This 177-nucleotide RNA was probed chemically with DMS. Source: RMDB library M2PK90, as collected in RNAgym. The DMS profile rests on 4,493 reads. The RNA was probed in 150 mM KOAc, 10 mM MgCl2 and 150 mM bicine (pH 8.5) at 24 C. Reactivities are given for positions 27 through 126. DMS adducts were read by reverse transcription with MarathonRT.
RNA sequence: GGGAACGACUCGAGUAGAGUCGAAAAAAAAACGCAACGACUCGAGUAGAGUCGAAAAGGGAACGACUCGAGUAGAGUCGAAAAACAAACGACUCGAGUAGAGUCGAAGGGAACCCAACCCAAAAAACUAUUUAGUAAGAUUCGUCUUACUAAAUAGAAAAGAAACAACAACAACAAC
Reactivity to DMS in 0.01 (KOAc 150mM, MgCl2 10mM, bicine 150mM(pH8.5), 24C), signal-to-noise 1, nucleotides 027 to 126: a100a020a000a200a000c290g030c240a190a070c000g000a000c000u000c020g000a080g000u020a050g000a000g020u000c000g000a000a040a000a000g000g010g010a060a060c000g010a000c000u000c000g010a090g000u010a030g010a010g000u010c000g000a000a020a080a110a090c110a070a090a140c000g000a000c000u000c000g000a090g010u000a150g000a010g010u000c000g000a040a080g000g000g000a060a060c010c030c010a120a140c020c000c000a000a060a070a100a040a080